[RMDB]
RNA sequence: GGGAACGACUCGAGUAGAGUCGAAAAUGACGAAGCUGCUCAGCUCAGUGUGCAAGGAACGUAUCGAAGAGCGAUUUGAGUGCUACCUUGAAGGUACGACAAGCUGAAUCAAGAUAGCGUCUGUAGAGUCCGUCGUGGAUUUCGAUCCACGAUGGACAAAAGAAACAACAACAACAAC
Reactivity to 2A3 in 0.01 (KOAc 150mM, MgCl2 10mM, bicine 150mM(pH8.5), 24C), signal-to-noise 3, nucleotides 027 to 126: u140g010a010c000g010a050a000g050c000u010g000c000u010c020a000g000c000u000c020a010g010u050g030u070g030c030a020a030g070g030a150a020c030g050u050a030u000c010g030a040a000g010a030g050c040g000a020u040u010u050g060a030g030u110g010c000u010a030c010c000u000u060g080a020a020g000g000u000a000c000g000a000c000a000a000g000c000u000g000a000a000u010c010a010a000g000a000u020a010g010c000g010u020c020u070g100u040a040g010a020
Reactivity to DMS in 0.01 (KOAc 150mM, MgCl2 10mM, bicine 150mM(pH8.5), 24C), signal-to-noise 5, nucleotides 027 to 126: u020g020a050c040g000a080a090g020c040u010g020c110u000c010a060g000c040u000c050a110g010u050g000u010g010c100a060a080g000g010a090a090c090g000u030a040u000c020g010a130a130g000a050g000c110g000a000u010u010u010g000a140g020u010g000c030u000a070c070c000u000u000g010a090a090g000g000u000a000c000g000a000c000a000a000g000c000u000g000a000a000u000c000a000a010g000a000u050a050g010c010g000u000c010u000g000u010a080g000a260

Structure probing data (2A3 and DMS) for a 177-nucleotide construct. The 2A3 profile rests on 9,293 reads. The DMS profile rests on 15,733 reads. For DMS the reverse transcriptase was MarathonRT. For 2A3 the reverse transcriptase was SuperScript II with manganese.